Chemical mapping of a 207-nucleotide RNA with DMS and 2A3.
For DMS, 10,643 sequencing reads were counted.
The 2A3 profile rests on 10,218 reads.
Values cover nucleotides 27 to 156.

[RMDB]
RNA sequence: GGGAACGACUCGAGUAGAGUCGAAAAGCGUACUACUUUCAUCGAUCUCUGGAGCACGAUAAGAUGCUUCCCAAAUAGGAAGCAUCUUUUGACGUGUGACAGAGGGAGAAAGUAUCGCAAACCACUACGAUGAAGGUUCGCCUUCAUCGUAGUGGAACAAAAAUGAUGUGUUCGCACAUCAUUUUUGAAAAGAAACAACAACAACAAC
Reactivity to DMS in 0.01 (KOAc 150mM, MgCl2 10mM, bicine 150mM(pH8.5), 24C), signal-to-noise 4, nucleotides 027 to 156: g000c010g020u000a080c060u000a020c000u000u000u000c010a300u000c170g010a060u010c010u000c000u000g000g020a300g010c000a010c010g020a190u000a020a010g010a030u000g010c000u000u000c000c000c030a050a160a270u010a040g010g010a030a020g020c000a010u000c000u000u000u000u000g020a170c080g060u000g000u000g010a300c020a020g000a020g020g020g000a030g000a020a020a010g000u000a010u000c010g010c020a050a100a230c010c000a010c010u000a010c000g010a010u000g000a020a010g030g030u000u000c300g030c000c000u000u010c000a010u000c000g010u000a000g030u010g000g010a030a060
Reactivity to 2A3 in 0.01 (KOAc 150mM, MgCl2 10mM, bicine 150mM(pH8.5), 24C), signal-to-noise 8, nucleotides 027 to 156: g020c020g050u100a110c040u000a000c020u050u020u040c100a300u300c070g070a120u030c010u000c000u000g010g010a030g020c000a000c010g020a020u010a060a010g000a000u000g010c010u010u020c000c010c020a210a300a100u300a050g000g000a000a000g000c000a000u000c000u000u000u000u010g010a010c000g000u010g000u000g000a000c000a000g000a010g000g000g000a030g000a000a000a000g000u000a020u300c010g000c030a040a040a030c000c000a000c000u000a000c000g010a010u000g000a000a000g050g020u040u170c220g120c020c000u000u000c000a000u000c000g000u000a000g000u000g000g010a010a010